[RMDB]
RNA sequence: GGGAACGACUCGAGUAGAGUCGAAAAGCCGCAGUACCUCGGCGGUGUGGUUGCGAAGAUCGCGAGCGGGUAUCGUAGCAGACAUGCUACGAGUGUAGCGGAGCUGCUGUCGCGCCGCCUCGUCUCGGAAUUCAUCUACUUUCGAGUAGAUGAAUUCAAAAGAAACAACAACAACAAC
Reactivity to 2A3 in 0.01 (KOAc 150mM, MgCl2 10mM, bicine 150mM(pH8.5), 24C), signal-to-noise 9, nucleotides 027 to 126: g030c010c010g000c020a020g040u110a070c020c020u080c050g010g000c010g000g000u040g010u020g020g020u030u110g010c020g060a100a020g030a110u110c040g000c020g030a050g050c050g020g100g060u140a090u090c000g000u000a000g000c000a010g060a150c130a140u120g000c000u000a000c000g000a020g020u190g030u060a010g000c010g000g050a050g010c040u060g000c010u050g050u110c010g000c010g010c010c000g020c000c010u020c010g030u000c020u030c040g040
Reactivity to DMS in 0.01 (KOAc 150mM, MgCl2 10mM, bicine 150mM(pH8.5), 24C), signal-to-noise 5, nucleotides 027 to 126: g000c000c010g010c110a070g000u010a080c030c030u020c100g010g000c050g000g020u000g010u010g000g000u000u010g000c050g000a130a100g000a070u010c070g000c010g000a110g000c030g000g000g010u020a110u000c010g020u010a000g000c010a010g000a130c300a110u010g000c010u000a000c000g000a040g010u030g000u020a150g020c000g000g000a100g010c030u000g000c030u020g010u010c050g010c090g000c000c000g020c030c000u000c260g000u010c020u000c090g020